[RMDB]
Chemical mapping of a 207-nucleotide RNA with 2A3. The reactions ran in a buffer of 150 mM KOAc, 10 mM MgCl2 and 150 mM bicine (pH 8.5), at 24 C. 2A3 adducts were read by reverse transcription with SuperScript II with manganese.
RNA sequence: GGGAACGACUCGAGUAGAGUCGAAAAACAGUUCUUCGGAACUGUAAAAAAGCGUACUACCAGUGGUGUAGGGAGUCGAGCAUCCCAAAUAGGAUGUUAACGACGACGAUCUACACGUAACAUCUGGUAUCGCAAAAAAGGCACCUUCGGGUGCCAACUACCACCGAUGAUUCGUCAUCGGUGGUAGAAAAGAAACAACAACAACAAC
Reactivity to 2A3 in 0.01 (KOAc 150mM, MgCl2 10mM, bicine 150mM(pH8.5), 24C), signal-to-noise 1, nucleotides 027 to 156: a000c010a030g000u000u000c000u030u040c200g070g050a010a000c000u010g030u060a140a090a000a000a000a000g040c050g030u100a160c030u000a000c010c000a020g010u040g040g000u000g010u010a020g010g000g000a030g000u020c020g000a000g000c000a000u070c010c040c000a020a300a120u300a020g000g000a020u020g030u150u090a290a130c040g050a010c000g030a020c030g000a020u000c000u000a000c010a000c000g000u000a060a000c010a130u240c000u000g000g070u000a000u040c000g000c000a050a000a300a000a000a000g000g010c000a000c020c000u070u110c280g120g000g010u000g000c000c000a000a000
For 2A3, 869 sequencing reads were counted. Reactivities are given for positions 27 through 156.